[RMDB]
RNA sequence: GGGAACGACUCGAGUAGAGUCGAAAACAAGGGUUCCACGGCAAUGUUCGUCAGCCGUGGGUGAGUCGGUCCUAAGGUGGCCCGUAACUCGGCGCCGCCGAAAAGGGAAGCCGGUUAAUAUUCCGGCGAAAUAGGUUUGUUUCGACAAACCUAUUUCAAAAGAAACAACAACAACAAC
Reactivity to DMS in 0.01 (KOAc 150mM, MgCl2 10mM, bicine 150mM(pH8.5), 24C), signal-to-noise 8, nucleotides 027 to 126: c100a130a090g000g010g010u030u020c010c000a010c010g010g000c010a100a070u030g020u010u030c120g000u010c080a160g020c000c010g010u000g010g000g010u020g010a020g020u000c010g000g000u000c000c000u000a100a130g020g050u000g000g020c000c000c000g000u020a270a140c300u030c010g010g010c220g020c000c010g020c000c000g000a010a040a070a060g000g000g010a160a150g010c000c010g010g000u000u010a090a120u020a250u030u020c000c000g000g000c030
Reactivity to 2A3 in 0.01 (KOAc 150mM, MgCl2 10mM, bicine 150mM(pH8.5), 24C), signal-to-noise 6, nucleotides 027 to 126: c040a040a090g130g000g070u140u060c010c000a000c000g000g000c070a090a080u070g040u120u190c160g110u150c090a180g250c090c000g000u000g000g000g000u030g000a000g000u010c010g000g010u000c000c000u020a060a060g000g000u010g010g000c010c000c000g030u070a110a080c060u010c080g010g000c200g000c010c000g000c000c000g010a020a020a000a000g050g030g040a090a030g000c010c010g000g020u040u040a080a050u060a070u170u050c000c000g000g000c000